[RMDB]
This 177-nucleotide RNA was probed chemically with DMS and 2A3. DMS adducts were read by reverse transcription with MarathonRT. It was measured as part of the RMDB library OK1LIB. The 2A3 profile rests on 16,141 reads. For 2A3 the reverse transcriptase was SuperScript II with manganese. Reactivities are given for positions 27 through 126. The DMS profile rests on 17,598 reads.
RNA sequence: GGGAACGACUCGAGUAGAGUCGAAAAGAAUAUAAGAGCGUAUUCGCGUCUUGACGUGAAUGAGCCUAGACUGUAGGAUCUAGUGGGAUAGGAACGCUCACUCACAAAACGCUAUUCCACAGGAAGAACUAAAUGAUGGGUUCGCCCAUCAUUUAGUAAAAGAAACAACAACAACAAC
Reactivity to DMS in 0.01 (KOAc 150mM, MgCl2 10mM, bicine 150mM(pH8.5), 24C), signal-to-noise 7, nucleotides 027 to 126: g010a110a080u050a090u030a100a150g000a030g030c020g000u010a050u000u000c000g030c010g020u010c050u050u020g000a020c020g020u000g010a020a020u020g000a080g010c020c020u010a040g010a130c140u030g020u010a030g010g020a140u020c020u020a090g040u010g000g010g010a020u000a010g010g020a140a040c030g000c010u000c020a110c080u010c100a100c170a050a050a080a090c130g020c010u000a010u000u010c000c000a030c050a190g000g020a130a080g010a110
Reactivity to 2A3 in 0.01 (KOAc 150mM, MgCl2 10mM, bicine 150mM(pH8.5), 24C), signal-to-noise 9, nucleotides 027 to 126: g040a060a040u210a020u100a160a060g010a000g020c020g010u040a020u010u020c000g000c000g030u030c100u160u270g120a020c010g010u010g010a010a020u040g020a010g010c000c000u060a080g070a250c100u170g140u210a030g020g070a040u060c020u030a050g010u010g010g000g010a000u010a030g060g020a060a010c010g000c010u030c020a040c020u100c000a080c050a040a140a060a010c060g000c040u010a010u020u000c010c000a000c000a020g100g090a080a080g010a050